[RMDB]
RNA sequence: GGGAACGACUCGAGUAGAGUCGAAAAGAAGGUACAAAACUUUUACCUUCAUCAUUCGAUAUUUAGGUUCAAUUAUAUUCCCAUCUAUGCUUUAGGGACUGAAUUGGAUGGUGGUAAUAAGGUAUAAUAUAUGGUCUGUGCCAAUCUUAUGGAUGGAGUCAUAUCAGCGUUUCGACGCUGAUAUGACAAAAGAAACAACAACAACAAC
Reactivity to 2A3 in 0.01 (KOAc 150mM, MgCl2 10mM, bicine 150mM(pH8.5), 24C), signal-to-noise 2, nucleotides 027 to 156: g050a080a000g010g020u060a060c050a070a060a070a060c120u100u130u090u100a060c020c000u060u090c000a010u000c000a010u030u020c050g040a050u020a120u170u050u130a080g000g050u020u040c010a050a080u300u000a170u100a060u150u030c000c010c020a050u010c060u030a140u190g090c080u090u080u190a060g020g000g050a000c000u000g030a020a020u010u030g000g010a000u000g000g010u000g030g000u050a050a130u080a290a000g040g000u000a070u010a060a140u090a010u080a100u070g030g010u000c030u010g050u030g000c000c000a050a120u000c020u000u140a110u100g120g000a050u020g050g040a030
About this RNA:
An RNA of 207 nucleotides, treated with 2A3 and read out base by base.